[RMDB]
The record gives the reactivity of an RNA of 177 nucleotides to 2A3.
2A3 is a SHAPE reagent: it acylates the 2'-hydroxyl of flexible nucleotides of all four kinds.
Source: RMDB library OK1LIB, as collected in RNAgym.
The reactions ran in a buffer of 150 mM KOAc, 10 mM MgCl2 and 150 mM bicine (pH 8.5), at 24 C.
Values are in units of 0.01, from 0 to 300, in steps of 10.
RNA sequence: GGGAACGACUCGAGUAGAGUCGAAAAAGUCCUGGUCGACGUAACCUACACCGACGGUGCAACGGAGCGUUACCAGGUGCUCGUCGGAUGGGAUUUUGAGCCGGCGUCCGAGUACGGCACGAAAGCCCGAUCUGCGUCCCUUCGGGGACGCAGAUCGAAAAGAAACAACAACAACAAC
Reactivity to 2A3 in 0.01 (KOAc 150mM, MgCl2 10mM, bicine 150mM(pH8.5), 24C), signal-to-noise 2, nucleotides 027 to 126: a000g160u080c030c060u070g030g030u020c160g000a010c060g160u190a060a140c000c000u010a010c000a050c000c010g300a180c120g040g000u030g010c040a040a000c080g090g000a080g050c070g020u040u040a020c000c040a100g000g000u010g000c000u010c020g040u010c000g000g000a030u130g030g010g010a060u000u000u130u260g040a030g000c060c000g050g050c000g020u070c010c030g000a000g010u100a030c010g040g020c050a020c050g040a110a000a000g000c000c050